[RMDB]
RNA sequence: GGGAACGACUCGAGUAGAGUCGAAAAGGUGACACGAGAGAAGAAUCUUAUUGUGGUAUUGUAUCAGGAAGUACUAUAUCUUCUCUUAUUGCUUCAAGAUCGUAUCAUGCAUCAAUAGAUCCUGUUGACUAUGACAUGCAUUCGUGCAUGUCAUAGUAAAAGAAACAACAACAACAAC
Reactivity to 2A3 in 0.01 (KOAc 150mM, MgCl2 10mM, bicine 150mM(pH8.5), 24C), signal-to-noise 4, nucleotides 027 to 126: g060g010u040g030a030c020a010c100g060a030g000a000g030a140a030g020a050a060u040c070u120u100a150u180u220g040u020g020g020u020a030u020u180g080u030a090u110c040a020g080g060a040a000g030u010a020c050u010a010u020a040u120c050u100u010c050u000c000u020u040a080u070u070g040c030u000u030c020a040a020g010a090u060c020g010u050a030u060c040a040u070g060c010a020u030c030a050a120u060a100g040a070u030c020c020u110g070u200u170g040
Reactivity to DMS in 0.01 (KOAc 150mM, MgCl2 10mM, bicine 150mM(pH8.5), 24C), signal-to-noise 6, nucleotides 027 to 126: g000g010u000g000a100c130a090c150g010a030g000a060g010a070a030g010a070a120u010c140u020u000a100u010u000g030u000g000g010u000a020u000u010g020u010a070u010c110a090g000g000a080a030g010u000a030c110u000a050u000a050u010c050u010u000c050u000c030u010u000a070u010u010g010c050u000u000c060a060a060g000a050u000c050g000u000a140u000c040a050u000g010c090a050u000c060a040a080u000a090g000a100u000c030c020u000g010u000u010g010

Chemical mapping of a 177-nucleotide RNA with 2A3 and DMS. For 2A3, 3,731 sequencing reads were counted. For DMS, 8,644 sequencing reads were counted.